RNA sequence: GGGAACGACUCGAGUAGAGUCGAAAAUCCUAAGUCUUCGGUCCCUUGGACCUUGCUUUGUCAGCUCUAUCGGAAACGAUAGAGCUUGGAUUUAAGCAAGCUAGGGACGGAAGAUAUGGAAAAUCCAAAGACUCUGGUUCGCCAGAGUCUUUGGAAACACUCCGAUAUACUUCGGUAUAUCGGAGUGAAAAGAAACAACAACAACAAC
Reactivity to 2A3 in 0.01 (KOAc 150mM, MgCl2 10mM, bicine 150mM(pH8.5), 24C), signal-to-noise 1, nucleotides 027 to 156: u000c000c000u030a150a000g030u000c000u010u020c110g220g000u010c000c000c030u020u090g100g060a180c090c000u000u000g030c010u040u010u010g000u010c000a000g020c000u000c000u070a010u000c000g010g060a160a050a090c000g010a000u000a000g000a020g000c000u000u020g050g000a010u120u050u280a000a000g020c010a010a000g000c000u020a010g000g010g000a000c020g000g000a000a000g000a010u040a030u020g060g020a120a120a000a080u070c000c010a000a020a020g020a000c030u010c000u010g030g020u120u150c250g080c060c000a010g000a000g000u010c050u050u040u030g000g000a010a000a000
Chemical mapping of a 207-nucleotide RNA with 2A3. Reactivities are given for positions 27 through 156. For 2A3, 1,164 sequencing reads were counted. It was measured as part of the RMDB library RNAMAK. The RNA was probed in 150 mM KOAc, 10 mM MgCl2 and 150 mM bicine (pH 8.5) at 24 C.